[RMDB]
Conditions: 150 mM KOAc, 10 mM MgCl2 and 150 mM bicine (pH 8.5), 24 C.
The record gives the reactivity of an RNA of 207 nucleotides to DMS and 2A3.
Reactivities are given for positions 27 through 156.
Reactivities are rounded to 0.1 and cut off at 0 and 3.
RNA sequence: GGGAACGACUCGAGUAGAGUCGAAAAGACUAGGAUCCUUCAGCUUCUCUCGAGAAGAGGAGAGACUCUAGAGCUGAUCUCAGUCAGGAGAUCCUUCCUUCUCUCCUAGCUGACUUCAGAGGAGACUUCGACUGAAGAGUCCUAGAGAGCUGAAGUCAAACGUCUCUAGAUUCGUCUAGAGACGUUUAAAAGAAACAACAACAACAAC
Reactivity to DMS in 0.01 (KOAc 150mM, MgCl2 10mM, bicine 150mM(pH8.5), 24C), signal-to-noise 2, nucleotides 027 to 156: g010a150c040u000a030g000g020a020u010c000c010u000u000c000a030g000c010u010u000c010u000c010u020c010g010a280g010a060a100g020a120g000g000a030g040a060g010a050c150u000c030u010a070g010a280g000c030u010g000a050u020c060u000c000a090g000u000c070a210g040g010a030g000a060u020c020c120u010u000c110c040u010u000c050u000c000u000c010c030u000a060g040c110u000g010a170c020u000u000c040a050g030a180g000g010a120g010a110c300u000u010c000g020a070c000u000g000a030a060g010a060g020u010c020c010u010a030g000a120g000a070g040c020u000g000a110a110g000u040c040
Reactivity to 2A3 in 0.01 (KOAc 150mM, MgCl2 10mM, bicine 150mM(pH8.5), 24C), signal-to-noise 3, nucleotides 027 to 156: g060a020c010u010a000g020g000a020u080c020c000u020u000c010a020g020c020u100u000c000u040c010u050c070g110a060g040a200a010g020a050g040g000a010g010a000g020a020c030u020c070u170a120g020a090g150c090u060g040a060u060c030u010c040a080g130u070c050a020g000g140a020g000a050u030c040c010u080u140c020c000u100u040c010u020c010u000c010c000u010a020g100c030u010g080a130c020u030u020c030a010g010a030g070g020a020g010a020c030u150u150c220g150a170c010u020g000a000a010g020a030g020u000c010c000u000a000g010a010g000a010g030c090u080g140a050a030g080u280c150